Chemical mapping of a 170-nucleotide RNA with DMS and 2A3.
RNA sequence: GGGAACGACUCGAGUAGAGUCGAAAACAACUGUUAUCUUGCCACUGCAUUGUUAACACUCCAACAAAUAGAGUUGAAGUUUAAUCCACCUGCUCUACAAAGGGCUGGUGAAGCUGCUAAGUUUUGUCCAGAAGCCUCUUCGGAGGCUUCAAAAGAAACAACAACAACAAC
Reactivity to DMS in 0.01 (KOAc 150mM, MgCl2 10mM, bicine 150mM(pH8.5), 24C), signal-to-noise 2, nucleotides 027 to 129: c060a080a100c200u000g000u010u150a090u020c020u010u010g000c110c160a000c110u040g060c030a010u010u080g010u000u000a110a060c080a060c070u020c060c130a070a030c160a030a140a090u090a170g010a120g050u030u000g070a070a120g030u000u000u100a050a160u050c070c000a010c030c060u010g000c030u000c000u010a090c250a140a000a140g030g000g040c030u000g020g040u010g050a070a040g000c080u000g000c150u010a010a070g000u000u020u070u070g000u050c010c100a120
Reactivity to 2A3 in 0.01 (KOAc 150mM, MgCl2 10mM, bicine 150mM(pH8.5), 24C), signal-to-noise 1, nucleotides 027 to 129: c050a000a150c030u050g020u150u010a200u000c020u020u050g000c060c040a210c160u080g000c000a010u090u000g040u000u000a000a000c020a000c080u120c280c000a010a000c000a060a300a300u000a160g150a000g010u030u030g040a000a000g010u040u130u130a000a000u010c000c000a000c010c020u030g070c000u060c010u070a090c030a020a110a130g050g000g000c000u010g090g000u000g000a000a000g080c060u000g000c000u000a000a050g000u000u000u150u300g060u000c010c000a050